[RMDB]
RNA sequence: GGGAACGACUCGAGUAGAGUCGAAAAGUAACCACUUCGGUGGUUACAAAAAAUCCUAAGUCAGGUGCCAGACUUUGACAUGCUCAUCGGAAACGAUGAGCAACAGCAUGGUCGGUAAUUCCUGAUAUGGAAAAAAACUCACGGUUCGCCGUGAGAAACUUCUUAGAUCCUUCGGGAUCUAAGAAGUAAAAGAAACAACAACAACAAC
Reactivity to 2A3 in 0.01 (KOAc 150mM, MgCl2 10mM, bicine 150mM(pH8.5), 24C), signal-to-noise 3, nucleotides 027 to 156: g000u000a000a000c000c000a010c010u020u070c240g120g010u000g000g000u000u000a020c010a000a000a000a000a000a010u030c010c000u050a080a020g030u000c000a000g000g000u000g030c090c080a160g080a010c010u030u030u020g070a130c030a050u030g000c000u000c010a000u000c000g060g010a080a060a090c040g000a010u000g000a010g010c000a030a010c010a000g040c010a010u040g030g010u020c010g000g000u050a170a220u190u070c000c000u000g000a000u010a030u070g000g000a020a090a010a020a060a030a090c030u040c030a000c000g010g110u050u080c270g050c100c000g000u010g010a000g070a130a000
Reactivity to DMS in 0.01 (KOAc 150mM, MgCl2 10mM, bicine 150mM(pH8.5), 24C), signal-to-noise 1, nucleotides 027 to 156: g030u000a020a030c000c000a010c010u010u000c280g040g080u000g000g040u000u000a010c000a000a040a070a070a090a130u000c000c000u000a050a250g000u000c020a000g010g140u000g000c000c010a160g120a020c010u000u000u090g000a000c030a300u000g000c000u000c000a030u000c000g000g000a300a040a230c010g050a030u000g000a000g060c010a000a000c090a080g000c040a040u000g000g010u000c030g000g020u000a030a120u000u000c010c000u000g040a010u000a110u000g000g030a050a000a070a110a050a130a110c010u000c000a000c030g020g000u000u010c180g000c010c000g040u010g010a030g080a090a080